[RMDB]
RNA sequence: GGGAACGACUCGAGUAGAGUCGAAAAGAUAUGGACCUGCAAGUGCCGAUAAGACCCGGUCGGAAACGACCGAGGUCUUUUGACGGCACUGCAGGUCCUAAGUCAAAGUGUUUCGUUCGCGAAACACGCUGCCAAUAGAGUUCGCUCUAUUGGCAGCAAAAGAAACAACAACAACAAC
Reactivity to 2A3 in 0.01 (KOAc 150mM, MgCl2 10mM, bicine 150mM(pH8.5), 24C), signal-to-noise 1, nucleotides 027 to 126: g010a010u040a040u080g020g010a000c010c000u000g060c080a200a130g000u000g060c010c260g250a140u090a300a000g000a000c020c020c000g010g020u000c020g040g000a060a020a020c020g010a010c010c000g080a060g000g030u000c000u000u000u000u010g020a000c030g000g010c000a000c010u000g000c000a010g010g000u000c000c030u000a000a000g000u010c020a030a070a100g000u000g000u010u000u020c040g020u020u060c270g030c000g080a030a010a000c020a000c060
Reactivity to DMS in 0.01 (KOAc 150mM, MgCl2 10mM, bicine 150mM(pH8.5), 24C), signal-to-noise 2, nucleotides 027 to 126: g000a040u000a210u010g000g000a000c020c000u000g000c000a010a140g040u000g020c000c000g000a270u030a010a080g000a020c010c000c010g000g000u010c000g020g000a050a030a130c010g010a000c000c000g000a020g030g000u000c000u010u000u010u010g020a120c160g010g010c000a010c000u000g000c020a000g010g010u000c000c000u000a000a050g000u000c010a140a110a210g000u000g010u000u000u010c010g000u000u010c260g000c010g000a000a000a010c000a000c000
Overview
An RNA of 177 nucleotides, treated with 2A3 and DMS and read out base by base. For 2A3 the reverse transcriptase was SuperScript II with manganese. For DMS the reverse transcriptase was MarathonRT. The RNA was probed in 150 mM KOAc, 10 mM MgCl2 and 150 mM bicine (pH 8.5) at 24 C.